[RMDB]
RNA sequence: GGGAACGACUCGAGUAGAGUCGAAAAGAUAUGGACAUGUGUAGGGAGCUCGCAAGUCAACUUGACCAUAUCGGAAACGAUAUGGUCAAGUUGACUUGCAGAGCAUCGAUCUACCAUGUCCUAAGUCCAUAAUUAUAUUGUUCGCAAUAUAAUUAUGAAAAGAAACAACAACAACAAC
Reactivity to DMS in 0.01 (KOAc 150mM, MgCl2 10mM, bicine 150mM(pH8.5), 24C), signal-to-noise 2, nucleotides 027 to 126: g010a120u010a300u000g010g000a020c000a010u000g000u010g030u000a010g000g000g010a020g020c010u000c000g020c020a040a000g000u020c000a000a030c010u000u000g020a050c000c000a050u000a010u000c000g000g000a150a090a230c020g040a030u000a000u000g000g000u000c000a000a000g020u000u000g020a010c000u000u000g010c000a010g010a010g020c000a070u000c170g010a060u010c000u000a000c000c000a010u000g000u000c000c000u000a010a060g000u010c040

Chemical mapping of a 177-nucleotide RNA with DMS. The DMS profile rests on 5,252 reads. Conditions: 150 mM KOAc, 10 mM MgCl2 and 150 mM bicine (pH 8.5), 24 C.